This 177-nucleotide RNA was probed chemically with 2A3 and DMS.
Reactivities are rounded to 0.1 and cut off at 0 and 3.
The DMS profile rests on 859 reads.
[RMDB]
RNA sequence: GGGAACGACUCGAGUAGAGUCGAAAACGGUCUUGCUUCAGCUUAUAGGGCGAAUUCCUUUGAUGUACCUACAUUCUGCGCAAACCGUUCUGCAAUGUGUAAUUGGUGCUUGAUUAGCCAAGAUUCCGUCUAACCCUACGUUCGCGUAGGGUUAGACAAAAGAAACAACAACAACAAC
Reactivity to 2A3 in 0.01 (KOAc 150mM, MgCl2 10mM, bicine 150mM(pH8.5), 24C), signal-to-noise 2, nucleotides 027 to 126: c000g000g000u010c070u050u000g000c000u140u140c010a020g010c010u050u000a020u000a030g020g010g000c040g120a080a040u160u160c080c000u080u040u140g170a130u080g020u060a180c000c010u000a000c020a040u000u000c010u010g030c010g010c010a010a020a020c000c000g030u020u050c000u050g010c010a040a180u110g120u020g030u130a010a160u040u020g040g000u020g040c020u160u120g050a120u100u160a030g010c000c010a010a000g120a140u070u000c050c000
Reactivity to DMS in 0.01 (KOAc 150mM, MgCl2 10mM, bicine 150mM(pH8.5), 24C), signal-to-noise 2, nucleotides 027 to 126: c020g000g000u000c160u000u000g010c010u020u020c000a030g030c070u000u000a050u010a010g010g000g010c030g010a170a060u010u000c100c280u000u000u000g040a130u000g020u000a020c020c000u000a020c020a040u000u000c030u000g040c300g000c050a010a010a020c020c010g000u000u000c000u000g010c140a070a020u010g010u020g010u010a170a020u000u020g000g000u020g010c040u000u000g000a190u010u000a200g000c040c000a070a100g000a100u010u010c010c070

Background
The RNA was probed in 150 mM KOAc, 10 mM MgCl2 and 150 mM bicine (pH 8.5) at 24 C. Source: RMDB library 15KREP, as collected in RNAgym. 2A3 adducts were read by reverse transcription with SuperScript II with manganese. For DMS the reverse transcriptase was MarathonRT.